[RMDB]
RNA sequence: GGGAACGACUCGAGUAGAGUCGAAAAGAUGUGUGUGAGCUCAUACGCGGGGCCUACCCAAAGAUUCAGACGACCAGCCGUGUGUUGAGAUCUUUAUUUUGGAAUGAGCCUGCGAUAGGUCAGAGGCCAACCUAGCUCAGUUCGCUGAGCUAGGUUGAAAAGAAACAACAACAACAAC
Reactivity to 2A3 in 0.01 (KOAc 150mM, MgCl2 10mM, bicine 150mM(pH8.5), 24C), signal-to-noise 1, nucleotides 027 to 126: g090a070u050g030u010g030u000g030u020g110a010g050c010u010c050a050u080a130c050g020c000g000g060g000g070c030c010u040a070c040c000c010a060a080a000g060a010u050u040c060a040g050a040c160g060a100c090c020a010g070c020c060g210u100g040u050g010u090u020g070a110g000a180u000c020u000u080u060a100u060u040u050u060g100g030a100a100u050g020a030g020c000c040u050g010c010g110a130u040a060g000g070u000c020a040g000a040g140g010c050
Reactivity to DMS in 0.01 (KOAc 150mM, MgCl2 10mM, bicine 150mM(pH8.5), 24C), signal-to-noise 3, nucleotides 027 to 126: g000a090u000g000u030g010u010g030u000g020a130g020c040u020c060a070u010a110c050g000c060g020g010g020g010c040c010u020a140c090c000c010a050a030a030g010a050u000u000c070a100g000a040c060g000a120c110c020a050g020c050c040g010u000g010u010g010u000u000g010a140g010a080u010c010u000u000u000a060u020u000u000u000g000g000a070a110u010g000a130g010c000c000u000g010c040g010a120u000a040g000g020u010c050a090g010a120g020g010c100